[RMDB]
This 177-nucleotide RNA was probed chemically with 2A3 and DMS. For 2A3 the reverse transcriptase was SuperScript II with manganese. For DMS the reverse transcriptase was MarathonRT. Conditions: 150 mM KOAc, 10 mM MgCl2 and 150 mM bicine (pH 8.5), 24 C. The data come from the RNA Mapping Database (RMDB), libraries RFM100 and RFMREP.

RNA sequence: GGGAACGACUCGAGUAGAGUCGAAAAGCAGUCUCACGCUAAUCUGGCAGACAUGUCAGGGAACCACGAGAUAAAUGUAAGUUAAAAUUCUGGUCCACGAUGAUCCGCAGAAAUGCGGGUAUAACUGCUACGCAUUGGUAUUCGUACCAAUGCGUAGAAAAGAAACAACAACAACAAC
Reactivity to 2A3 in 0.01 (KOAc 150mM, MgCl2 10mM, bicine 150mM(pH8.5), 24C), signal-to-noise 7, nucleotides 027 to 126: g060c030a030g050u010c000u010c020a030c200g000c060u100a020a010u020c000u010g010g000c000a010g070a200c150a170u030g010u010c000a010g000g000g010a020a040c010c020a020c110g020a010g000a020u090a070a160a060u160g080u140a050a150g050u050u160a100a100a090a120u140u050c050u090g090g020u040c040c040a060c090g020a020u230g020a010u030c000c000g010c000a000g040a060a050a010u010g000c000g000g000g000u010a020u010a010a030c020u080g010
Reactivity to DMS in 0.01 (KOAc 150mM, MgCl2 10mM, bicine 150mM(pH8.5), 24C), signal-to-noise 5, nucleotides 027 to 126: g010c040a070g000u000c030u000c000a140c110g000c120u010a060a100u000c030u000g010g010c000a020g000a140c300a080u010g010u000c010a000g000g010g000a120a070c100c030a120c150g000a060g010a070u000a080a060a090u010g000u000a070a050g020u000u000a050a040a070a110u010u000c010u010g000g000u000c090c020a030c050g020a040u030g010a020u000c000c000g040c000a000g000a090a100a100u020g010c030g000g000g020u000a020u000a100a070c200u010g000